[RMDB]
RNA sequence: GGGAACGACUCGAGUAGAGUCGAAAACACGCAAAGAUUAUUUUUAACGCCAUCUUGCAUGUCUUUGUUACCGCCUUUACCAAUGCCAGCGAUUUUGCCAUCUUUAAUACCAAUAUCCGCUUUAUAAUGCAAAACUAUCGUUCGCGAUAGUUUUGCAAAAAGAAACAACAACAACAAC
Reactivity to 2A3 in 0.01 (KOAc 150mM, MgCl2 10mM, bicine 150mM(pH8.5), 24C), signal-to-noise 2, nucleotides 027 to 126: c030a000c010g010c030a030a030a010g030a050u060u020a110u000u300u140u100u080a120a000c040g010c000c000a070u020c020u000u080g000c000a060u000g000u000c070u120u090u040g030u090u070a060c000c020g000c020c040u040u030u030a130c020c000a100a080u090g000c000c010a010g000c030g060a060u050u010u000u080g060c000c000a020u000c020u070u120u120a030a000u080a040c000c000a000a030u010a140u260c000c000g020c040u070u140u170a170u050a130a020
Conditions: 150 mM KOAc, 10 mM MgCl2 and 150 mM bicine (pH 8.5), 24 C. Structure probing data (2A3) for a 177-nucleotide construct. Values are in units of 0.01, from 0 to 300, in steps of 10.